RNA sequence: GGGAACGACUCGAGUAGAGUCGAAAAAGAAAGAGAGCGUAGCACACACACAGACUAAGUCUGACACACACCUACGCUACAUGUGUGUGUGAAGUCGAGAUAUCGACAAGUGUGUGUCAUGAAAAAAGCAUACAUAUAUGUUCGCAUAUAUGUAUGCAAAAGAAACAACAACAACAAC
Reactivity to DMS in 0.01 (KOAc 150mM, MgCl2 10mM, bicine 150mM(pH8.5), 24C), signal-to-noise 9, nucleotides 027 to 126: a070g010a070a080a080g010a110g010a090g010c020g020u000a070g010c030a010c010a010c000a020c010a060c020a090g010a100c150u010a090a110g010u010c040u000g010a080c000a010c010a000c000a010c010c030u000a030c050g010c070u010a050c190a040u000g020u000g010u000g000u000g000u000g010a040a280g000u000c010g000a010g010a170u010a090u000c000g010a010c000a050a100g010u000g010u000g010u000g010u000c040a040u010g000a000a040a050a070a060a080
Reactivity to 2A3 in 0.01 (KOAc 150mM, MgCl2 10mM, bicine 150mM(pH8.5), 24C), signal-to-noise 9, nucleotides 027 to 126: a000g090a020a060a000g140a010g020a010g020c020g020u050a020g050c020a000c000a000c000a000c000a000c020a020g110a090c080u090a100a040g090u030c060u050g020a000c000a000c000a000c000a000c010c010u050a010c020g030c040u070a030c060a120u080g020u000g000u000g000u000g000u000g040a070a010g000u000c000g010a010g010a140u170a050u160c010g000a010c010a030a030g000u010g000u000g000u010g000u010c000a030u130g060a030a080a010a010a010a010